[RMDB]
Structure probing data (2A3 and DMS) for a 177-nucleotide construct.
The RNA was probed in 150 mM KOAc, 10 mM MgCl2 and 150 mM bicine (pH 8.5) at 24 C.
As a SHAPE reagent, 2A3 marks flexible, mostly unpaired nucleotides at the ribose 2'-OH.
For 2A3 the reverse transcriptase was SuperScript II with manganese.
It was measured as part of the RMDB library OK1LIB.
RNA sequence: GGGAACGACUCGAGUAGAGUCGAAAAGAAGGGAAAGGAGACCCAUGGACAGUCUCCAGAGGUUCCUAAGGCCUCGGUCGCGCCUGCAGGGAGGCAGAAUGUCCCGGUUGUCCAUGUAAGAAGAAGAGCUAUCGGAUUUAUUCGUAAAUCCGAUAGCAAAAGAAACAACAACAACAAC
Reactivity to 2A3 in 0.01 (KOAc 150mM, MgCl2 10mM, bicine 150mM(pH8.5), 24C), signal-to-noise 5, nucleotides 027 to 126: g070a030a050g070g030g030a050a050a060g020g010a010g000a000c010c000c040a000u010g000g000a010c000a020g010u000c000u000c000c020a010g020a010g030g050u090u130c030c010u050a060a080g080g000c010c000u020c030g040g040u090c030g000c020g000c020c030u060g020c050a030g040g020g040a000g020g050c030a030g090a100a080u130g050u040c000c010c000g050g000u060u040g010u020c000c000a010u040g070u090a100a100g030a090a020g060a060a020g060a040
Reactivity to DMS in 0.01 (KOAc 150mM, MgCl2 10mM, bicine 150mM(pH8.5), 24C), signal-to-noise 5, nucleotides 027 to 126: g000a130a120g010g010g010a060a100a100g010g010a010g010a040c010c040c070a060u000g000g010a040c030a130g010u010c020u000c000c010a080g010a060g020g010u010u010c050c070u030a090a070g000g000c010c010u010c030g000g000u020c060g000c160g020c040c020u010g010c050a120g010g000g000a050g000g000c040a090g010a120a090u020g010u010c000c000c000g010g020u040u000g000u010c000c020a030u010g010u040a090a080g000a130a120g020a110a080g010a220